[RMDB]
Notes: Structure probing data (2A3 and DMS) for a 177-nucleotide construct. Conditions: 150 mM KOAc, 10 mM MgCl2 and 150 mM bicine (pH 8.5), 24 C. For 2A3, 2,927 sequencing reads were counted. For DMS, 1,495 sequencing reads were counted.
RNA sequence: GGGAACGACUCGAGUAGAGUCGAAAACUAGGCUUCGGCCUAGAAACACCCGUACAUAUGUUUCCGUGCUUGACAAUGAGUUCAAUCACGUCACAAUUUAUGGGUCGAAAACCAUGCUUCGGCAUGGCGCAUAGAUUUUCUUCGGAAAAUCUAUGCGAAAAGAAACAACAACAACAAC
Reactivity to 2A3 in 0.01 (KOAc 150mM, MgCl2 10mM, bicine 150mM(pH8.5), 24C), signal-to-noise 3, nucleotides 027 to 126: c000u000a010g000g000c000u060u060c260g150g000c000c000u000a000g000a000a020a000c020a010c000c010c000g010u000a020c030a030u270a090u140g030u020u080u020c070c080g020u020g020c010u000u020g010a020c020a070a300u300g030a100g090u150u020c010a020a010u000c000a020c020g010u020c030a010c010a040a010u010u030u010a000u020g000g000g010u070c060g110a060a010a030a060c000c020a000u030g000c000u040u050c140g100g000c000a000u000g000g000
Reactivity to DMS in 0.01 (KOAc 150mM, MgCl2 10mM, bicine 150mM(pH8.5), 24C), signal-to-noise 2, nucleotides 027 to 126: c000u000a010g000g020c000u010u010c260g040g010c000c000u010a000g000a070a070a150c160a060c010c030c000g010u020a010c120a040u000a100u000g010u010u000u010c140c080g050u000g000c200u000u000g000a000c020a180a140u000g020a160g010u000u000c000a000a010u000c000a010c010g020u000c300a000c030a010a210u000u000u000a000u000g010g030g000u000c070g000a040a030a060a250c010c010a000u000g010c000u000u010c190g020g020c010a000u000g010g000